[RMDB]
RNA sequence: GGGAACGACUCGAGUAGAGUCGAAAAGAUAUGGAGCGGGUUUCCUCGGUAAUUCUCGGAAACGAGUGCCAGAGGAACUGCGCUCCUAAGUCAAACGUCUUUCUAGUCUUCGGACUAGAAAGACGAACUAUUGUAGGUGCUUCGGCACCUACAAUAGAAAAGAAACAACAACAACAAC
Reactivity to 2A3 in 0.01 (KOAc 150mM, MgCl2 10mM, bicine 150mM(pH8.5), 24C), signal-to-noise 1, nucleotides 027 to 126: g050a000u060a040u160g010g010a030g010c030g030g020g040u090u290u180c000c000u000c000g000g030u080a190a230u300u030c000u010c000g050g040a060a050a050c020g010a000g010u000g010c000c110a070g030a050g000g000a000a000c010u090g080c010g000c000u000c000c000u020a040a020g000u020c040a220a040a000c010g000u000c010u000u000u010c000u010a000g000u040c010u000u060c300g130g010a000c000u030a000g000a010a000a000g010a000c000g000a000a010
Reactivity to DMS in 0.01 (KOAc 150mM, MgCl2 10mM, bicine 150mM(pH8.5), 24C), signal-to-noise 1, nucleotides 027 to 126: g010a050u000a270u000g000g000a010g020c010g000g000g000u000u000u000c000c000u000c000g000g000u010a010a150u010u000c000u000c010g000g000a050a070a150c000g000a020g040u000g000c000c000a100g060a030g010g000a000a000c000u000g010c000g020c010u000c000c000u010a010a060g000u000c020a090a110a210c010g000u000c000u000u000u000c000u000a000g010u000c010u000u010c170g040g000a010c000u000a000g010a000a000a010g010a000c000g000a010a080

Structure probing data (2A3 and DMS) for a 177-nucleotide construct. For 2A3, 2,034 sequencing reads were counted. High DMS reactivity at an A or C suggests that its Watson-Crick edge is free.